[RMDB]
RNA sequence: GGGAACGACUCGAGUAGAGUCGAAAACGACAUGGCUUCGGCCAUGUCGAAAGGACGAGUGAGACCGAAACGGAGGUAGGUCCAACUACCUUCUCAGUCAAAAAAUCCGUUUGUUCGCAAACGGAAACUACCUAAGUCGGUUCGCCGACUUAGGUAGAAAAGAAACAACAACAACAAC
Reactivity to DMS in 0.01 (KOAc 150mM, MgCl2 10mM, bicine 150mM(pH8.5), 24C), signal-to-noise 2, nucleotides 027 to 126: c000g060a020c000a020u010g010g000c010u000u020c120g030g000c000c000a000u000g000u000c000g020a010a070a150g040g000a090c060g000a120g010u000g000a270g010a140c030c050g020a030a120a100c220g040g020a000g000g010u040a010g000g000u000c170c230a080a240c000u000a000c000c000u000u000c000u000c090a080g010u020c070a020a060a090a060a060a060u010c000c010g000u000u000u010g010u000u000c210g020c020a000a010a010c010g010g000a010a030a120
Reactivity to 2A3 in 0.01 (KOAc 150mM, MgCl2 10mM, bicine 150mM(pH8.5), 24C), signal-to-noise 1, nucleotides 027 to 126: c000g000a000c000a000u000g000g000c000u070u050c250g040g020c000c000a000u000g000u000c000g000a010a000a000g040g020a010c080g070a060g150u170g050a120g020a090c010c030g070a100a150a000c120g000g000a010g000g000u010a000g000g040u050c070c020a060a100c000u010a010c010c000u000u000c030u020c010a030g060u000c010a000a000a000a010a000a260u020c000c000g010u000u000u000g040u020u050c170g000c130a000a000a000c010g000g000a000a030a000
This 177-nucleotide RNA was probed chemically with DMS and 2A3. Values cover nucleotides 27 to 126. 2A3 is a SHAPE reagent: it acylates the 2'-hydroxyl of flexible nucleotides of all four kinds. It was measured as part of the RMDB library M2PK50. Conditions: 150 mM KOAc, 10 mM MgCl2 and 150 mM bicine (pH 8.5), 24 C. For DMS the reverse transcriptase was MarathonRT. For DMS, 981 sequencing reads were counted.